Chemical mapping of a 207-nucleotide RNA with 2A3. It was measured as part of the RMDB library M2RFPK. The RNA was probed in 150 mM KOAc, 10 mM MgCl2 and 150 mM bicine (pH 8.5) at 24 C.
RNA sequence: GGGAACGACUCGAGUAGAGUCGAAAACCAGCUUGCCUGUGUCCUAGGGAAUUGGAAGGUCAUCCUUCACAGGAUCGUGUGGAAGUCCUGCUCGGGGCGGAAGCCUUAAAACCAUUCGAGCUAGUCAAAAACCGGCUGAUCUUCGGAUCAGCCGGAACUAUCUGUGCACCUUCGGGUGCACAGAUAGAAAAGAAACAACAACAACAAC
Reactivity to 2A3 in 0.01 (KOAc 150mM, MgCl2 10mM, bicine 150mM(pH8.5), 24C), signal-to-noise 1, nucleotides 027 to 156: c000c000a000g000c070u070u170g060c000c010u030g000u020g020u140c060c050u060a120g000g020g080a110a150u190u120g040g100a070a020g010g070u090c050a100u100c020c010u080u110c040a060c050a040g020g010a120u140c030g000u110g000u050g060g040a100a000g070u010c000c020u000g030c040u040c020g000g000g000g000c060g030g030a070a000g060c020c010u030u060a050a020a050a110c050c030a080u170u150c010g000a000g000c070u100a000g130u140c000a040a040a030a040a080c010c000g000g000c000u000g000a000u010c000u020u120c180g030g000a000u000c010a000g000c010c000g000g000a000a000